[RMDB]
RNA sequence: GGGAACGACUCGAGUAGAGUCGAAAACUUAUUUGCAGACUCAAGACCGAUAUCAACAAUAUCAGCACCCUCAUCAAUCAAUUCGCUAUCAACGUAGGUGGCUGCUGCAUCUGGUUCAUCAAAGACACUUGGGUCAUAUGGUGACUCCUUAGAUAUACGGUGGGGGAAUGUUCGCAUUCCCCCACCGAAAAGAAACAACAACAACAAC
Reactivity to 2A3 in 0.01 (KOAc 150mM, MgCl2 10mM, bicine 150mM(pH8.5), 24C), signal-to-noise 1, nucleotides 027 to 156: c020u070u140a110u250u220u170g030c040a030g000a060c020u070c050a000a000g000a060c010c080g020a020u000a010u220c070a020a050c060a000a190u130a030u270c040a000g020c000a050c000c000c060u080c080a140u020c000a040a090u000c000a040a120u160u090c100g000c010u120a110u100c050a090a020c240g100u100a110g020g040u050g090g000c020u000g020c000u010g000c040a030u020c030u070g150g000u040u000c050a050u030c040a120a070a060g090a050c020a030c090u000u080g000g000g080u000c030a000u050a110u060g100g000u000g030a030c000u050c010c010u060u040a130g040a030u060a050u080a210